An RNA of 207 nucleotides, treated with 2A3 and DMS and read out base by base. The RNA was probed in 150 mM KOAc, 10 mM MgCl2 and 150 mM bicine (pH 8.5) at 24 C. The data come from the RNA Mapping Database (RMDB), library OK3TST. For DMS, 3,082 sequencing reads were counted. DMS (dimethyl sulfate) methylates the pairing face of unpaired adenines and cytosines.
[RMDB]
RNA sequence: GGGAACGACUCGAGUAGAGUCGAAAAAGCGCGGUCAAAUGAUCGCAAAGAACACCAUUCGAUCACGUCGCGCACAUUCAGAAACGCCGAUUAUCGUUAUUCAGCAGCGCCUACACGCGCAGGAUAUGACCUGGUUUCUGAUGAAUGGCGGAAUGGGCAACCCAGAAGCAUUCGUGCUUCUGGGUUGAAAAGAAACAACAACAACAAC
Reactivity to 2A3 in 0.01 (KOAc 150mM, MgCl2 10mM, bicine 150mM(pH8.5), 24C), signal-to-noise 4, nucleotides 027 to 156: a000g120c070g000c010g010g020u060c040a180a180a290u300g010a010u020c000g000c000a000a100a020g030a050a040c070a050c100c010a030u020u040c020g090a100u140c070a030c110g060u040c020g010c000g050c010a010c010a090u110u140c020a010g020a030a030a030c070g050c070c050g070a070u050u070a100u140c020g030u010u040a050u070u110c020a040g030c010a020g000c020g010c010c050u300a120c110a010c200g000c010g000c010a010g030g000a010u060a080u180g030a060c020c010u040g030g060u020u010u060c000u030g020a040u020g030a040a050u030g010g000c040g010g020a000a010u010g030g000g000
Reactivity to DMS in 0.01 (KOAc 150mM, MgCl2 10mM, bicine 150mM(pH8.5), 24C), signal-to-noise 2, nucleotides 027 to 156: a080g010c080g040c000g010g020u010c040a090a110a140u000g010a030u000c080g050c070a020a040a120g000a100a080c030a080c050c000a060u000u000c000g000a070u000c030a130c030g030u000c030g030c060g040c030a160c050a070u020u000c000a060g000a040a060a030c040g030c020c020g010a150u010u000a050u000c030g010u000u000a120u000u000c050a080g030c020a130g010c100g040c000c020u000a150c070a080c060g030c020g040c030a190g010g020a110u000a020u010g030a050c010c060u000g030g010u000u000u000c030u000g010a020u010g010a050a070u000g040g010c020g010g000a070a070u010g030g010g020